[RMDB]
RNA sequence: GGGAACGACUCGAGUAGAGUCGAAAAUGCUUACCACAGGCUGUGUUCUUACACUGACUGUAUAGAAAGAGGAGGUAGAGUAAACCUACCCCAUAUACACCUCAGCUCAGGCCCUGUGCCUGGUCUGGUUGUCCUGCUAAUUCGUUAGCAGGACAACAAAAGAAACAACAACAACAAC
Reactivity to DMS in 0.01 (KOAc 150mM, MgCl2 10mM, bicine 150mM(pH8.5), 24C), signal-to-noise 4, nucleotides 027 to 126: u020g020c030u000u000a140c130c200a110c030a000g000g000c000u020g000u000g000u010u020c240u020u020a030c070a030c010u030g000a030c030u000g000u020a080u030a080g000a070a040a110g000a130g010g000a080g000g000u000a030g000a160g030u040a070a100a130c110c000u000a030c010c000c010c030a090u010a090u010a090c170a110c050c040u000c010a010g010c010u000c020a000g000g000c010c020c190u020g020u020g020c000c000u000g000g000u010c010u000g000
Reactivity to 2A3 in 0.01 (KOAc 150mM, MgCl2 10mM, bicine 150mM(pH8.5), 24C), signal-to-noise 8, nucleotides 027 to 126: u070g020c010u080u100a060c040c020a010c040a020g010g020c020u010g000u010g010u090u160c070u190u270a030c020a000c010u020g050a030c010u010g060u020a050u060a050g190a030a120a010g110a090g080g010a100g010g000u000a000g020a070g100u220a070a090a060c000c000u010a010c000c000c010c010a010u040a000u010a100c060a060c020c010u070c010a000g000c010u010c020a000g000g010c010c010c130u240g080u200g020c000c000u000g000g010u000c010u000g020
This 177-nucleotide RNA was probed chemically with DMS and 2A3. Values cover nucleotides 27 to 126. The RNA was probed in 150 mM KOAc, 10 mM MgCl2 and 150 mM bicine (pH 8.5) at 24 C.